[RMDB]
RNA sequence: GGGAACGACUCGAGUAGAGUCGAAAAGGAGCUCGAUGCUAGAUGGUUCCAAUACGUGUUGGGAUCACUACUUUACGUUAGUAGAGUAGUGUUAUGAUAACGUUAUCGUAACAUCUAGCAUCGAGGAGAUAGGAUUCUGAUUCGUUAGAGUUCUAUCAAAAGAAACAACAACAACAAC
Reactivity to DMS in 0.01 (KOAc 150mM, MgCl2 10mM, bicine 150mM(pH8.5), 24C), signal-to-noise 6, nucleotides 027 to 126: g010g010a130g010c000u000c000g010a010u000g010c000u000a000g000a010u000g000g010u000u000c000c000a010a010u000a090c300g010u070g020u000u000g000g010g010a010u000c000a010c000u000a000c000u000u000u000a000c000g010u040u070a080g010u000a000g000a010g000u000a000g020u000g010u000u000a000u000g010a010u000a030a210c300g020u050u010a010u000c000g010u000a010a000c000a020u000c000u000a000g000c000a000u000c000g010a000g000g010a070
Reactivity to 2A3 in 0.01 (KOAc 150mM, MgCl2 10mM, bicine 150mM(pH8.5), 24C), signal-to-noise 9, nucleotides 027 to 126: g100g010a050g020c000u000c000g000a000u000g000c000u000a000g000a000u010g020g000u010u000c000c000a000a010u180a120c230g080u190g010u120u010g000g000g010a000u010c000a000c000u000a000c000u010u000u000a010c020g140u080u260a060g000u010a000g000a000g000u000a000g000u000g000u000u000a000u000g010a010u010a120a100c220g070u190u050a010u010c000g000u000a000a000c000a000u000c000u000a000g000c000a000u000c000g000a000g000g000a000